Conditions: 150 mM KOAc, 10 mM MgCl2 and 150 mM bicine (pH 8.5), 24 C. Chemical mapping of a 177-nucleotide RNA with DMS and 2A3. For DMS the reverse transcriptase was MarathonRT. 2A3 adducts were read by reverse transcription with SuperScript II with manganese. The DMS profile rests on 2,302 reads. The 2A3 profile rests on 896 reads.
RNA sequence: GGGAACGACUCGAGUAGAGUCGAAAACGGUUAAAUAGGGCUUCUGCGAACACAUGGAGUUAGUGCCGACUAGGGACGAACCAAGAUUGCGCGAGAGGGGGAACUUGGUGGUAGGGCAGCACGAAUCACUAAUGUCCACCUUCGGGUGGACAUUAGUAAAAGAAACAACAACAACAAC
Reactivity to DMS in 0.01 (KOAc 150mM, MgCl2 10mM, bicine 150mM(pH8.5), 24C), signal-to-noise 2, nucleotides 027 to 126: c150g050g000u010u040a060a060a120u050a060g010g000g000c080u010u010c060u000g020c010g000a110a020c120a110c070a050u010g030g010a050g000u000u000a130g030u000g000c020c000g000a070c200u000a080g000g000g010a120c060g000a080a070c080c070a040a050g010a150u020u000g000c040g020c050g020a110g000a050g000g030g000g000g000a030a030c030u010u000g040g010u000g060g010u010a150g000g010g010c030a040g010c100a070c120g040a120a070u010c120
Reactivity to 2A3 in 0.01 (KOAc 150mM, MgCl2 10mM, bicine 150mM(pH8.5), 24C), signal-to-noise 2, nucleotides 027 to 126: c020g000g020u080u150a000a010a070u200a210g000g040g000c000u060u010c050u050g030c040g000a130a050c160a000c010a030u080g020g000a010g070u020u060a020g030u120g050c000c020g030a080c090u070a080g040g000g000a020c030g030a050a010c000c000a030a000g050a070u140u300g060c000g000c010g020a090g020a040g010g070g000g000g000a020a020c020u000u040g070g020u040g030g090u150a010g030g020g000c000a000g000c000a020c190g110a050a020u030c000